[RMDB]
RNA sequence: GGGAACGACUCGAGUAGAGUCGAAAAUUUACGUCCGCUGCCCGAUCGGAGACUGAGGCGCCAGUACGGAACCGAGAGGGUGUUCGUCCCCACUGCAUAAGGACCCAAGGGGGAGGACAACCAACAAUCAACUCAUGCGGUUCGCUGCAUGGGUUGAAAAAGAAACAACAACAACAAC
Reactivity to DMS in 0.01 (KOAc 150mM, MgCl2 10mM, bicine 150mM(pH8.5), 24C), signal-to-noise 9, nucleotides 027 to 126: u020u030u030a050c100g010u000c010c030g010c070u010g000c010c020c020g000a140u010c040g000g010a100g010a120c060u000g000a120g010g000c050g010c030c010a040g020u010a100c110g010g010a130a120c040c020g000a070g000a250g010g010g020u000g010u010u000c040g020u000c000c010c000c010a090c060u010g000c090a080u030a090a090g000g000a120c020c030c040a090a100g010g000g000g000g010a180g000g000a030c050a050a090c070c040a090a080c190a060a130
Reactivity to 2A3 in 0.01 (KOAc 150mM, MgCl2 10mM, bicine 150mM(pH8.5), 24C), signal-to-noise 9, nucleotides 027 to 126: u080u050u080a060c050g030u010c010c020g020c060u070g030c000c010c000g020a050u040c020g030g010a050g060a080c030u060g030a050g090g020c030g020c030c010a020g020u060a090c040g050g060a060a040c010c020g030a040g020a040g060g050g010u020g010u020u040c040g160u040c010c000c000c000a110c030u040g000c010a070u070a220a090g070g040a080c010c010c010a040a070g030g000g000g000g000a020g000g010a010c010a020a060c030c010a020a060c030a030a100
Structure probing data (DMS and 2A3) for a 177-nucleotide construct. DMS adducts were read by reverse transcription with MarathonRT. For 2A3 the reverse transcriptase was SuperScript II with manganese. Conditions: 150 mM KOAc, 10 mM MgCl2 and 150 mM bicine (pH 8.5), 24 C. It was measured as part of the RMDB library OK1LIB. The DMS profile rests on 36,673 reads. The 2A3 profile rests on 57,493 reads.